[RMDB]
RNA sequence: GGGAACGACUCGAGUAGAGUCGAAAAUACUCACAUUUCGAUGUGAGUAACUGUCUAGUCGCUAGCGCCCAUCAAGCGCUAGCGACUAGACUUUAUUGAUCGCCAGCUAACCUUUCGAGGUUAGCAAGAUAUACUAUCCCUUCGGGGAUAGUAUAUCAAAAGAAACAACAACAACAAC
Reactivity to DMS in 0.01 (KOAc 150mM, MgCl2 10mM, bicine 150mM(pH8.5), 24C), signal-to-noise 2, nucleotides 027 to 126: u010a000c000u000c000a010c000a020u010u000u000c120g010a030u000g000u000g000a010g020u000a010a040c060u000g010u000c000u000a000g010u000c020g080c000u000a030g020c020g020c000c030c100a070u020c300a180a290g030c000g010c000u000a000g040c000g000a010c000u000a000g000a010c000u000u000u000a090u000u000g010a100u000c080g000c070c050a160g000c000u000a010a010c000c000u010u000u010c150g020a020g010g010u000u000a000g020c000a030a020
An RNA of 177 nucleotides, treated with DMS and read out base by base. DMS adducts were read by reverse transcription with MarathonRT.